This 207-nucleotide RNA was probed chemically with 2A3 and DMS. It was measured as part of the RMDB library OK3TST. For DMS, 3,165 sequencing reads were counted. For 2A3, 1,771 sequencing reads were counted. The RNA was probed in 150 mM KOAc, 10 mM MgCl2 and 150 mM bicine (pH 8.5) at 24 C. For DMS the reverse transcriptase was MarathonRT.

RNA sequence: GGGAACGACUCGAGUAGAGUCGAAAAGGCGCCCACGACGACGCAGGUCCGCAACGCGGAGGCUGUGCUGGGCGAGCUGCACACGGUAGCUACAACCGCGGCGGAGUGCCUGCCGCCCGAAGUGCGCCCGCCCGUGCCCGCGCGCCCGCGGGUGGGCUAUGCUCACAUAAUUCGUUAUGUGAGCAUAAAAAGAAACAACAACAACAAC
Reactivity to 2A3 in 0.01 (KOAc 150mM, MgCl2 10mM, bicine 150mM(pH8.5), 24C), signal-to-noise 2, nucleotides 027 to 156: g050g000c030g020c030c030c020a050c050g070a040c020g000a000c030g020c020a010g020g050u080c010c000g030c050a230a230c060g010c010g010g010a040g050g110c060u050g020u120g030c060u100g000g050g000c040g010a030g050c120u190g010c020a020c010a020c130g070g130u150a050g060c030u240a120c080a190a080c040c030g010c010g010g000c000g020g000a050g050u150g060c020c020u040g000c040c000g010c000c020c000g060a160a040g030u050g030c000g010c020c000c000g010c000c000c000g000u040g010c000c020c020g000c010g010c010g040c000c040c010g000c010g010g000g000u100g000g000g000c000
Reactivity to DMS in 0.01 (KOAc 150mM, MgCl2 10mM, bicine 150mM(pH8.5), 24C), signal-to-noise 1, nucleotides 027 to 156: g020g040c030g030c010c010c010a180c150g020a080c040g000a100c050g030c000a090g000g010u010c040c030g030c020a080a120c060g030c020g000g010a230g000g010c030u010g020u010g020c000u010g000g040g040c020g000a030g050c080u010g040c020a040c010a210c050g010g010u010a090g000c060u000a110c050a090a110c010c000g000c050g000g010c000g030g010a300g020u000g020c050c030u010g030c000c020g000c010c040c070g010a090a080g010u010g020c050g000c000c000c010g040c050c010c010g010u000g020c000c000c020g000c040g030c040g000c140c020c030g000c010g000g030g020u000g010g000g030c030